[RMDB]
RNA sequence: GGGAACGACUCGAGUAGAGUCGAAAAGAUAUGGACUGCAUCGAUCUGGCUACGACUUGGACCUCGGAAACGAGCUAGUCGGUCCAGGGAGCAGUCCUAAGUCAAAACUUACAGUUCGCUGUAAGAACAACCGAAACAGGUUCGCCUGUUUCGGUUGAAAAGAAACAACAACAACAAC
Reactivity to DMS in 0.01 (KOAc 150mM, MgCl2 10mM, bicine 150mM(pH8.5), 24C), signal-to-noise 2, nucleotides 027 to 126: g000a020u000a300u000g010g010a000c000u000g000c000a300u000c080g030a060u000c010u000g000g000c120u010a140c000g010a020c000u000u000g040g010a150c300c020u000c010g010g000a070a060a180c000g020a000g000c030u000a010g000u000c000g020g000u010c000c000a000g020g010g000a020g010c010a000g000u010c000c000u010a010a030g000u020c050a090a060a090a120c000u000u010a000c020a010g020u010u000c250g010c020u000g000u010a010a000g010a150a260
Reactivity to 2A3 in 0.01 (KOAc 150mM, MgCl2 10mM, bicine 150mM(pH8.5), 24C), signal-to-noise 2, nucleotides 027 to 126: g040a010u050a050u140g010g020a010c020u010g000c000a260u300c090g080a120u020c010u000g020g030c080u300a260c110g040a010c010u060u110g050g140a200c050c010u010c000g000g000a020a090a090c010g000a010g020c020u010a010g000u000c040g000g050u050c020c010a010g000g010g000a020g000c000a000g000u020c000c000u000a030a000g030u000c030a010a040a170a180c010u010u020a020c010a040g040u020u110c170g130c130u010g010u000a000a010g030a020a050
An RNA of 177 nucleotides, treated with DMS and 2A3 and read out base by base. Conditions: 150 mM KOAc, 10 mM MgCl2 and 150 mM bicine (pH 8.5), 24 C. The DMS profile rests on 1,717 reads. Source: RMDB library TTRDEL, as collected in RNAgym.